[RMDB]
RNA sequence: GGGAACGACUCGAGUAGAGUCGAAAAAGUGGAUCCGCUAUACGUAGCGGAUCCACAUUGGCAUGAUGAGGAAACCUUACGUUUAUCUGAUCUAUUUGAUGAUAAAUUCCUCCUACUCAUUCUGAAAUAAGUCUUAAACUUUCGAGUUUAAGACUUAAAAAGAAACAACAACAACAAC
Reactivity to 2A3 in 0.01 (KOAc 150mM, MgCl2 10mM, bicine 150mM(pH8.5), 24C), signal-to-noise 9, nucleotides 027 to 126: a010g010u000g000g000a010u010c000c000g000c010u010a010u010a050c270g100u040a000g000c000g000g010a000u000c000c000a000c000a000u000u010g020g010c080a050u070g020a070u070g020a040g010g020a040a110a100c030c040u110u110a080c110g030u010u010u010a030u010c020u040g130a030u010c040u110a260u210u210u220g050a050u020g000a000u000a010a020a010u080u020c000c000u020c000c010u050a070c010u010c020a040u120u020c020u030g040a070a100a100
Reactivity to DMS in 0.01 (KOAc 150mM, MgCl2 10mM, bicine 150mM(pH8.5), 24C), signal-to-noise 9, nucleotides 027 to 126: a100g020u000g000g020a010u000c000c000g020c000u000a040u020a100c220g030u010a000g010c010g010g010a000u000c000c000a000c000a000u010u010g010g010c150a060u010g010a070u010g000a030g000g000a070a100a120c150c110u010u020a110c260g020u000u000u000a010u000c010u000g010a190u010c150u010a120u010u010u010g000a110u000g000a020u000a010a010a050u000u000c030c020u000c040c070u000a110c050u000c020a090u000u000c040u000g010a060a100a120
Structure probing data (2A3 and DMS) for a 177-nucleotide construct. Values cover nucleotides 27 to 126. Conditions: 150 mM KOAc, 10 mM MgCl2 and 150 mM bicine (pH 8.5), 24 C.